[RMDB]
The record gives the reactivity of an RNA of 177 nucleotides to DMS and 2A3.
RNA sequence: GGGAACGACUCGAGUAGAGUCGAAAAGAGGAAAUCGUGUCUUGGAGCGCGCGGAGUAAACAUAUAUGGUUCAUAUAUAACCGUAGGCACGUAAAGAAAGCGAGUAAGGCAGAGAGAACUGCCAGAACGCCUCACGUAUAUUCGUAUACGUGAGGCGAAAAGAAACAACAACAACAAC
Reactivity to DMS in 0.01 (KOAc 150mM, MgCl2 10mM, bicine 150mM(pH8.5), 24C), signal-to-noise 1, nucleotides 027 to 126: g000a060g000g000a030a010a010u060c000g110u010g000u000c000u000u010g010g000a170g000c030g050c010g000c030g000g000a040g000u000a000a100a030c240a100u020a010u000a020u000g000g020u070u010c090a130u070a000u000a000u020a060a040c000c000g000u000a040g000g030c010a040c050g130u020a100a050a000g040a070a040a070g000c000g000a070g010u000a080a080g040g030c000a000g000a070g050a300g010a050a260c000u000g000c010c010a040g000a060a300
Reactivity to 2A3 in 0.01 (KOAc 150mM, MgCl2 10mM, bicine 150mM(pH8.5), 24C), signal-to-noise 4, nucleotides 027 to 126: g120a030g020g090a000a000a050u060c020g000u020g010u050c040u050u090g210g080a100g000c010g000c000g000c010g050g000a030g030u250a000a180a040c060a010u050a000u000a000u020g300g000u200u210c060a000u000a000u000a010u000a070a020c000c000g000u010a010g000g000c020a000c030g000u050a020a010a050g080a070a050a000g040c030g000a000g080u170a070a090g020g020c060a000g010a020g000a000g000a080a060c000u010g000c000c000a000g010a100a000
The RNA was probed in 150 mM KOAc, 10 mM MgCl2 and 150 mM bicine (pH 8.5) at 24 C. The 2A3 profile rests on 2,125 reads. For DMS the reverse transcriptase was MarathonRT.